[RMDB]
RNA sequence: GGGAACGACUCGAGUAGAGUCGAAAAUCCCAAUGAAGAAACUUUCACAUGUCUUACUCUCUGUCCUAGUCCCAGAGCCUGUAAAGGUGAACCACUGGGACUGGCUGGGGGAGAAGAGGAAGAUUUGCUAAGGCUCUCAUUUCGAUGAGAGCCUUAGAAAAGAAACAACAACAACAAC
Reactivity to DMS in 0.01 (KOAc 150mM, MgCl2 10mM, bicine 150mM(pH8.5), 24C), signal-to-noise 1, nucleotides 027 to 126: u010c000c000c000a100a110u030g030a060a170g020a090a110a120c160u010u040u010c110a230c030a170u090g000u040c000u000u050a230c000u000c000u000c010u000g020u010c050c000u020a010g000u000c000c000c000a020g000a180g000c000c000u010g020u040a050a170a030g070g000u020g020a140a060c240c200a160c000u000g020g000g000a000c030u020g040g010c070u030g000g000g020g020g000a040g000a070a010g000a050g000g000a060a020g010a100u000u000u020g020
Reactivity to 2A3 in 0.01 (KOAc 150mM, MgCl2 10mM, bicine 150mM(pH8.5), 24C), signal-to-noise 2, nucleotides 027 to 126: u000c000c010c020a000a040u140g000a010a060g050a020a130a010c060u010u110u050c040a060c000a090u210g040u020c020u010u090a190c000u000c000u000c000u030g070u240c060c030u180a060g030u060c010c000c000a000g000a010g060c000c000u100g020u160a130a080a080g030g000u030g100a100a030c090c030a050c070u000g000g010g000a000c000u040g000g000c010u030g030g000g000g030g010a000g000a030a000g020a010g000g010a010a000g040a030u030u050u220g010